[RMDB]
RNA sequence: GGGAACGACUCGAGUAGAGUCGAAAAUAAACAUACUUCCUGAUACGUUUAAUACUGAGAAGGUUUUCAACUGGCGGUUUAUCAUUGUAUCAGUUUUGUUUGAUGCAGCAGUGAUGGCGUUGAUAGCAUGGCAAUUAGUAUUCGUACUAAUUGCCAUAAAAGAAACAACAACAACAAC
Reactivity to 2A3 in 0.01 (KOAc 150mM, MgCl2 10mM, bicine 150mM(pH8.5), 24C), signal-to-noise 4, nucleotides 027 to 126: u060a000a080a000c020a050u170a070c030u030u040c000c010u000g040a040u010a110c030g010u050u030u080a160a090u110a070c020u040g010a020g080a220a130g110g030u020u050u100u130c070a070a000c030u040g060g020c010g030g070u040u080u080a040u030c020a010u020u160g030u020a020u030c010a010g030u030u080u190u180g160u060u130u050g070a040u040g000c020a040g000c010a020g020u010g050a060u030g040g000c000g020u020u070g050a080u060a030g090c070
Reactivity to DMS in 0.01 (KOAc 150mM, MgCl2 10mM, bicine 150mM(pH8.5), 24C), signal-to-noise 9, nucleotides 027 to 126: u010a060a080a090c100a090u010a170c140u000u000c090c010u000g010a090u000a030c050g010u000u000u010a070a070u010a050c040u010g000a090g010a100a090g000g000u000u000u000u010c140a050a080c050u000g010g010c050g010g010u000u000u000a020u010c080a040u000u010g020u000a020u000c010a030g000u010u000u000u010g010u000u000u000g000a060u000g000c050a060g010c070a070g010u000g010a060u000g010g010c050g010u000u000g010a100u000a080g010c180
Chemical mapping of a 177-nucleotide RNA with 2A3 and DMS. The RNA was probed in 150 mM KOAc, 10 mM MgCl2 and 150 mM bicine (pH 8.5) at 24 C. Source: RMDB library OK2TST, as collected in RNAgym. The DMS profile rests on 17,279 reads.